An RNA of 207 nucleotides, treated with 2A3 and DMS and read out base by base.
The reactions ran in a buffer of 150 mM KOAc, 10 mM MgCl2 and 150 mM bicine (pH 8.5), at 24 C.
2A3 adducts were read by reverse transcription with SuperScript II with manganese.
The DMS profile rests on 1,974 reads.
For DMS the reverse transcriptase was MarathonRT.
[RMDB]
RNA sequence: GGGAACGACUCGAGUAGAGUCGAAAAAGCUGUAACCAAGUGGAGUCGUUAAAGGUUUAGGAUGGGAUACUGUGUCACUACAUCCCGGAAGUAACAUUGCACGAUGGCUGCCCAUUACAAGGCUGCAGUCUCUAGAGUUGCCUUGGUGGAGACCGAGCUGUCGUAGUUAGUUCGCUAACUACGACAGAAAAGAAACAACAACAACAAC
Reactivity to 2A3 in 0.01 (KOAc 150mM, MgCl2 10mM, bicine 150mM(pH8.5), 24C), signal-to-noise 2, nucleotides 027 to 156: a000g060c050u040g010u080a020a000c050c000a030a070g040u050g070g050a020g010u060c000g030u040u080a090a080a070g110g070u040u140u120a050g030g070a060u080g020g040g030a060u080a090c060u070g010u050g050u160c050a020c080u070a020c000a070u150c010c000c000g030g000a070a040g010u000a000a030c080a170u050u140g060c030a010c130g060a050u080g080g010c040u010g030c020c000c000a020u070u090a110c030a070a060g000g010c020u030g030c010a020g060u020c010u010c000u070a030g010a010g080u070u110g020c000c000u000u020g020g010u010g000g040a050g000a000c020c040g020a020g020
Reactivity to DMS in 0.01 (KOAc 150mM, MgCl2 10mM, bicine 150mM(pH8.5), 24C), signal-to-noise 1, nucleotides 027 to 156: a100g030c050u000g050u020a020a040c060c030a090a110g020u000g000g000a090g000u000c070g030u000u010a020a090a120g030g050u010u000u020a100g010g030a140u000g010g010g060a070u000a110c060u000g000u000g040u000c050a070c040u030a110c070a110u000c030c000c000g000g020a080a120g030u000a030a040c040a080u000u000g000c030a050c060g020a070u010g020g020c010u000g000c030c000c050a060u010u000a130c130a120a050g010g010c050u020g010c050a040g000u000c010u000c030u010a110g000a280g030u000u000g000c040c070u000u000g010g040u000g020g010a140g000a200c020c000g000a170g030